Chemical mapping of a 177-nucleotide RNA with 2A3 and DMS. For DMS, 26,149 sequencing reads were counted. Conditions: 150 mM KOAc, 10 mM MgCl2 and 150 mM bicine (pH 8.5), 24 C. 2A3 is a SHAPE reagent: it acylates the 2'-hydroxyl of flexible nucleotides of all four kinds. Values cover nucleotides 27 to 126.
RNA sequence: GGGAACGACUCGAGUAGAGUCGAAAAGAUAUGGAGAUCUACCGAUAAGCCUCGUAUCGGAAACGAUACAGGCUUUUGACGGUGGGCCUCCUAAGUCAAAAGCAUAAUUUGUUCGCAAAUUAUGCAACAUGUAGGAUAAGUUCGCUUAUCCUACAUGAAAAGAAACAACAACAACAAC
Reactivity to 2A3 in 0.01 (KOAc 150mM, MgCl2 10mM, bicine 150mM(pH8.5), 24C), signal-to-noise 5, nucleotides 027 to 126: g010a010u040a020u060g000g000a000g000a010u000c000u010a010c000c010g120a230u090a300a030g010c010c020u080c200g010u000a010u010c010g010g000a050a010a010c000g000a000u000a010c010a000g030g010c010u010u010u010u050g020a000c000g000g010u010g000g010g000c000c000u000c000c000u020a060a010g020u000c030a050a030a100a090g000c000a000u010a010a010u020u000u020g040u060u140c240g000c210a000a010a000u010u000a010u000g000c000a000a010
Reactivity to DMS in 0.01 (KOAc 150mM, MgCl2 10mM, bicine 150mM(pH8.5), 24C), signal-to-noise 9, nucleotides 027 to 126: g000a020u000a210u010g000g000a010g010a010u000c000u000a010c000c000g020a190u000a040a030g010c000c000u000c260g020u000a000u000c000g000g000a040a040a070c000g010a010u000a000c000a010g010g010c000u000u000u000u000g010a140c050g010g010u000g000g010g000c050c000u000c000c000u000a010a070g000u000c020a100a080a120a140g010c000a010u000a000a000u000u000u000g010u000u010c230g020c010a000a010a010u000u000a000u000g000c000a070a100